Chemical mapping of a 177-nucleotide RNA with DMS. The reactions ran in a buffer of 150 mM KOAc, 10 mM MgCl2 and 150 mM bicine (pH 8.5), at 24 C. For DMS, 667 sequencing reads were counted.

RNA sequence: GGGAACGACUCGAGUAGAGUCGAAAAAUGGGGUAAGGCUCCCAGUAGACGACUGGGUUGAUAGGCCGGAUCUGGAAGCCAGGUAACUGGUGGAGGUGACCGGUACUAAUAGGCCGAGGGCUUGUCCAGUCGACAGAAUUUUCGAAUUCUGUCGACUAAAAGAAACAACAACAACAAC
Reactivity to DMS in 0.01 (KOAc 150mM, MgCl2 10mM, bicine 150mM(pH8.5), 24C), signal-to-noise 1, nucleotides 027 to 126: a130u010g000g010g020g010u010a140a140g010g010c020u010c010c000c000a010g000u000a050g040a140c210g000a160c000u000g000g000g020u000u000g000a070u000a080g010g020c010c000g010g000a300u000c000u000g010g040a300a300g000c020c010a000g020g000u000a170a090c000u000g000g020u000g000g000a250g010g010u010g010a070c060c000g000g000u000a020c010u000a010a070u000a110g000g000c010c030g010a130g010g000g000c160u000u000g000u000c060c110